[RMDB]
RNA sequence: GGGAACGACUCGAGUAGAGUCGAAAACUGAGCCAUUCCACAGCUCCAGAGGCUUCUCGUCAGACUGCCCUGUGAGCUGAGUGUCCUCUCCAUCCAGGAGGUCUGAGGUGCAAGGGCUGGGCGGUCACCUUUACCGACUGUUCGCAGUCGGUAAAGGAAAAGAAACAACAACAACAAC
Reactivity to DMS in 0.01 (KOAc 150mM, MgCl2 10mM, bicine 150mM(pH8.5), 24C), signal-to-noise 2, nucleotides 027 to 126: c070u000g000a130g020c030c010a110u000u000c030c050a280c070a010g000c010u000c000c010a000g010a220g020g000c010u020u000c050u000c080g000u010c250a090g000a060c100u000g000c030c010c000u000g030u010g020a020g020c020u000g010a050g020u010g030u020c070c000u010c000u000c080c060a140u010c080c100a110g020g000a250g000g010u010c060u010g000a080g000g000u000g030c120a080a110g010g010g010c020u000g000g010g000c040g020g000u010c040a150
Reactivity to 2A3 in 0.01 (KOAc 150mM, MgCl2 10mM, bicine 150mM(pH8.5), 24C), signal-to-noise 1, nucleotides 027 to 126: c030u030g020a010g050c000c000a060u140u000c040c020a050c010a010g010c000u000c020c000a020g150a120g120g040c030u120u000c050u050c040g260u060c000a040g000a110c080u060g030c020c000c010u030g050u130g060a000g000c010u000g000a020g020u050g010u000c030c000u050c010u010c020c040a110u010c020c040a090g040g030a060g040g050u080c080u050g090a050g000g060u050g000c040a060a040g080g010g000c000u000g050g020g000c020g010g010u060c020a080

Source: RMDB library OK2TRN, as collected in RNAgym. Structure probing data (DMS and 2A3) for a 177-nucleotide construct. For 2A3, 1,668 sequencing reads were counted.